[RMDB]
RNA sequence: GGGAACGACUCGAGUAGAGUCGAAAAGAUAUGGACGCUUCACGAGCGUUGAAAUCGGAAACGAUGGAGCUCGGUGACGGGCGUCCUAAGUCAAAGUUCUAGACAUUCUUCGGAAUGUCUAGAACAACCAUACACGCUUCUUCGGAAGCGUGUAUGGAAAAGAAACAACAACAACAAC
Reactivity to 2A3 in 0.01 (KOAc 150mM, MgCl2 10mM, bicine 150mM(pH8.5), 24C), signal-to-noise 1, nucleotides 027 to 126: g010a030u030a030u140g000g010a000c010g010c010u050u020c040a020c010g000a000g000c040g050u170u040g050a000a010a000u000c000g020g030a080a060a000c030g010a000u020g020g000a000g000c010u000c130g080g120u090g050a090c210g090g010g000c000g010u000c010c000u010a100a010g050u010c030a190a030a000g010u000u010c000u010a010g000a000c000a000u010u040c030u030u090c290g060g020a000a000u040g010u000c000u000a000g000a000a000c000a000a000
Reactivity to DMS in 0.01 (KOAc 150mM, MgCl2 10mM, bicine 150mM(pH8.5), 24C), signal-to-noise 3, nucleotides 027 to 126: g010a090u000a300u010g000g000a020c000g000c000u020u000c020a050c020g000a030g000c000g010u010u020g000a050a120a020u000c000g000g000a080a140a210c010g000a020u000g010g000a140g020c000u000c000g030g000u010g040a080c300g000g010g010c010g000u000c000c000u000a020a070g000u000c030a110a050a110g000u000u000c000u010a000g000a020c010a010u000u000c000u000u020c190g020g000a020a010u000g010u000c000u010a000g000a000a000c000a060a100
Conditions: 150 mM KOAc, 10 mM MgCl2 and 150 mM bicine (pH 8.5), 24 C. This 177-nucleotide RNA was probed chemically with 2A3 and DMS. The 2A3 profile rests on 2,702 reads. 2A3 adducts were read by reverse transcription with SuperScript II with manganese. DMS (dimethyl sulfate) methylates the pairing face of unpaired adenines and cytosines.